[RMDB]
RNA sequence: GGGAACGACUCGAGUAGAGUCGAAAAGAUAUGGAAGGUCCCCACUGUAGGAUGCACUUCAACAGCCUGUGAGUCGGAAACGACUCCAGGACAUGAAGGGGUCCUACAGUGGGGACCUUCCUAAGUCGAUUAAGACGGAGUUCGCUCCGUCUUAAUCAAAAGAAACAACAACAACAAC
Reactivity to DMS in 0.01 (KOAc 150mM, MgCl2 10mM, bicine 150mM(pH8.5), 24C), signal-to-noise 1, nucleotides 027 to 126: g000a050u010a300u000g020g030a000a000g020g010u000c000c000c000c000a020c000u000g020u000a010g000g000a010u000g020c100a140c010u000u020c000a030a080c290a300g000c000c000u010g000u020g010a000g060u000c000g010g000a180a050a250c000g020a010c000u000c000c000a010g000g010a020c070a140u000g000a020a030g020g020g000g020u000c000c000u010a000c000a010g020u000g000g000g000g000a000c000c000u000u040c000c000u010a000a010g010u000c060